[RMDB]
RNA sequence: GGGAACGACUCGAGUAGAGUCGAAAAUGCAUAUGAUGUAACGAUAUUGCUAUCUUAAUGACGAUGAUGACAAUAUCCCACCAAGAUCGCUGAUGCAAAAACGUUCAGAGAGUUCGCUCUCUGAACGGUUUAUGGGAAGCUUCGGCUUCCCAUAAACAAAAGAAACAACAACAACAAC
Reactivity to 2A3 in 0.01 (KOAc 150mM, MgCl2 10mM, bicine 150mM(pH8.5), 24C), signal-to-noise 6, nucleotides 027 to 126: u090g000c030a030u050a060u190g080a040u070g070u130a090a040c050g010a010u010a020u040u020g000c020u020a010u030c020u070u200a250a180u200g090a070c110g080a080u150g000a010u040g020a020c010a010a010u010a020u030c000c040c020a070c000c030a080a020g070a120u080c040g030c150u120g040a030u030g000c000a000a020a010a080a070c020g000u000u010c010a000g000a000g000a000g000u050u070c180g060c090u000c000u000c000u000g000a000a000c000g000
Reactivity to DMS in 0.01 (KOAc 150mM, MgCl2 10mM, bicine 150mM(pH8.5), 24C), signal-to-noise 4, nucleotides 027 to 126: u000g000c010a040u010a090u000g010a080u000g020u010a080a170c240g010a020u000a010u000u000g010c010u000a020u000c000u000u000a070a120u020g020a160c250g000a050u010g000a020u000g010a030c010a010a020u000a010u000c000c100c070a100c200c090a090a130g010a070u000c060g020c100u000g010a050u000g010c040a040a070a030a060a290c010g010u000u010c000a010g000a010g000a020g020u000u010c280g000c000u000c000u000c000u000g000a000a000c000g010
Annotation: Chemical mapping of a 177-nucleotide RNA with 2A3 and DMS. Values cover nucleotides 27 to 126. The 2A3 profile rests on 6,909 reads. For 2A3 the reverse transcriptase was SuperScript II with manganese. The reactions ran in a buffer of 150 mM KOAc, 10 mM MgCl2 and 150 mM bicine (pH 8.5), at 24 C. Source: RMDB library RFMREP, as collected in RNAgym.